RNA sequence: GGGAACGACUCGAGUAGAGUCGAAAAUUGUUGAGUUCACGACGCCACCUGGUCGUUGGACGAACACACAUUUUGGCGCAAAUGAACAGUACACAUGGCGCACUUGUCCUGUGUGGGUGCUCCUACAGUCAAGCCGAACGUUCGCGUUCGGCUUGACAAAAGAAACAACAACAACAAC
Reactivity to 2A3 in 0.01 (KOAc 150mM, MgCl2 10mM, bicine 150mM(pH8.5), 24C), signal-to-noise 1, nucleotides 027 to 126: u070u020g000u100u100g040a020g030u000u010c000a000c000g020a000c000g030c010c030a200c040c150u210g060g000u080c000g070u150u030g020g020a000c000g010a040a010c080a000c000a000c000a030u060u140u080u020g080g000c030g000c040a040a040a040u010g000a050a000c080a210g110u200a070c020a000c020a020u050g060g010c140g000c130a030c200u110u030g000u130c000c050u000g010u020g100u000g030g050g000u000g000c030u070c010c000u010a040c040a030

The record gives the reactivity of an RNA of 177 nucleotides to 2A3. The 2A3 profile rests on 436 reads. The RNA was probed in 150 mM KOAc, 10 mM MgCl2 and 150 mM bicine (pH 8.5) at 24 C.